An RNA of 177 nucleotides, treated with DMS and 2A3 and read out base by base. The 2A3 profile rests on 4,294 reads. Reactivities are given for positions 27 through 126.
[RMDB]
RNA sequence: GGGAACGACUCGAGUAGAGUCGAAAAACGCGAGGAUUCGUCCUCGCGUACAUAAGUGAGUUCGCCGGAUAGCUGCCUAAGUGAGUUCGCCGGAUUGCUGCCAAGCACAUAGUUUCGACUAUGUGAAACUUUCUAAGCGAUUCGUCGCUUAGAAAGUAAAAGAAACAACAACAACAAC
Reactivity to DMS in 0.01 (KOAc 150mM, MgCl2 10mM, bicine 150mM(pH8.5), 24C), signal-to-noise 5, nucleotides 027 to 126: a010c010g010c010g000a000g020g010a040u000u020c210g010u000c000c000u000c000g000c000g010u000a010c120a100u020a110a050g000u010g000a080g020u010u000c040g020c160c020g000g000a070u000a220g010c030u000g010c100c070u010a080a070g010u000g000a070g020u000u000c040g030c140c030g010g000a070u000u000g010c040u010g000c020c080a060a160g010c010a010c000a010u000a010g010u000u010u020c180g010a030c000u000a000u000g000u000g000a060a070
Reactivity to 2A3 in 0.01 (KOAc 150mM, MgCl2 10mM, bicine 150mM(pH8.5), 24C), signal-to-noise 3, nucleotides 027 to 126: a000c000g010c000g000a010g000g000a020u040u090c180g020u030c080c000u000c000g000c000g010u000a010c000a040u170a020a050g060u040g200a040g010u020u070c020g000c040c000g000g010a030u040a030g060c030u070g040c050c070u120a140a040g050u050g110a070g060u020u030c030g020c000c000g000g030a030u020u110g020c000u060g060c020c020a070a020g050c000a000c000a010u010a000g010u010u070u060c170g020a010c010u000a010u010g000u010g000a040a020